[RMDB]
RNA sequence: GGGAACGACUCGAGUAGAGUCGAAAAGGAGGCUCAGCAUAUCCAAUCGAUAUUCUCCAAACAGCUGGUGUUGAUAUGACUGAUGCGGCACCAAUUGAAUCUGCACUCACAGGAUAUGCCGACUAUCUUGAUCAGAUGGAGGCGCUUAUUGAGUAGGGCGUUACAAGCAAUUCGUUGCUUGUAACGCAAAAGAAACAACAACAACAAC
Reactivity to 2A3 in 0.01 (KOAc 150mM, MgCl2 10mM, bicine 150mM(pH8.5), 24C), signal-to-noise 2, nucleotides 027 to 156: g040g010a000g000g000c030u070c190a010g000c010a030u030a030u090c030c130a070a150u130c020g090a040u020a110u180u090c050u050c030c000a080a200a120c090a180g050c110u080g010g030u020g010u090u000g080a120u000a140u110g250a250c140u050g020a000u300g020c000g040g030c010a030c190c000a010a020u230u110g000a020a020u080c020u010g000c060a000c030u010c000a060c060a080g060g030a020u050a010u210g010c020c030g050a130c000u150a050u090c000u130u220g050a090u110c060a000g070a070u060g060g020a030g000g000c030g000c070u170u140a120u230u100g000a040g040u030a050g130g050